[RMDB]
RNA sequence: GGGAACGACUCGAGUAGAGUCGAAAACUCCUGGAGUAAUGAAGGCUGCUUUUUUCGUUACACCCUUCCCCGGCAGCGCCGGUGGCAGUGUUCAGCCCUUUUCCGGGCAAACUGCUGCCAGUCUGUCCCUCCUCCAAAAUUUCGAUUUUGGAGGAGGAAAAGAAACAACAACAACAAC
Reactivity to 2A3 in 0.01 (KOAc 150mM, MgCl2 10mM, bicine 150mM(pH8.5), 24C), signal-to-noise 6, nucleotides 027 to 126: c050u040c000c020u070g050g020a040g020u030a050a030u060g030a030a020g080g030c050u040g150c100u250u120u060u010u020u030c010g020u020u020a030c030a090c020c000c000u020u010c000c010c000c000g010g000c000a000g000c030g020c040c010g000g000u010g010g000c000a000g000u010g110u160u210c110a040g000c010c010c000u070u200u150u090c090c070g000g010g000c010a040a020a000c000u000g000c000u000g000c000c000a010g010u000c000u000g000u000c000
Reactivity to DMS in 0.01 (KOAc 150mM, MgCl2 10mM, bicine 150mM(pH8.5), 24C), signal-to-noise 2, nucleotides 027 to 126: c090u020c000c020u020g030g000a110g010u020a040a040u000g020a080a050g010g020c130u010g040c080u000u010u010u020u010u000c020g010u000u010a070c100a200c020c000c080u010u030c020c000c000c080g000g000c000a010g040c200g040c050c030g010g040u000g020g000c000a030g000u000g010u010u020c300a240g030c000c000c010u000u010u050u020c200c190g000g000g040c000a040a170a010c010u000g000c000u000g000c030c000a020g010u000c000u000g030u000c020